RNA sequence: GGGAACGACUCGAGUAGAGUCGAAAAGAUAUGGAAGGCUAGUGAACUACGAAGGCUCUUCGGAAACGAAGAGAUCUUCGCAGGCCUUCCUAAGUCAAACCUUUGUGCGGUUCGCCGCACAAAGGAAGGUUAUAGUUCUCUUCGGAGAACUAUAACCAAAAGAAACAACAACAACAAC
Reactivity to 2A3 in 0.01 (KOAc 150mM, MgCl2 10mM, bicine 150mM(pH8.5), 24C), signal-to-noise 2, nucleotides 027 to 126: g020a000u060a000u120g010g010a000a010g020g000c020u120a090g300u090g300a140a110c100u140a060c210g000a000a000g000g000c010u030c000u000u000c010g000g030a040a050a030c000g000a000a010g010a000g000a010u040c010u000u020c000g000c020a000g040g000c000c000u000u010c000c000u000a020a000g030u000c030a070a040a240c010c000u000u000u000g000u000g010c010g010g110u080u110c300g050c080c000g000c000a000c000a010a000a000g000g000a020a020
Reactivity to DMS in 0.01 (KOAc 150mM, MgCl2 10mM, bicine 150mM(pH8.5), 24C), signal-to-noise 2, nucleotides 027 to 126: g020a030u010a300u000g000g000a010a010g000g010c000u010a150g020u010g000a140a190c100u010a070c010g010a000a000g000g020c000u010c000u030u000c010g000g000a070a080a150c000g000a020a000g000a000g000a020u020c000u000u000c000g030c010a060g020g010c010c000u000u000c000c000u000a020a080g000u000c020a140a130a170c010c000u000u000u000g000u000g030c000g000g000u000u010c270g040c000c000g040c000a010c000a000a000a000g000g000a020a020
Source information:
This 177-nucleotide RNA was probed chemically with 2A3 and DMS. The reactions ran in a buffer of 150 mM KOAc, 10 mM MgCl2 and 150 mM bicine (pH 8.5), at 24 C.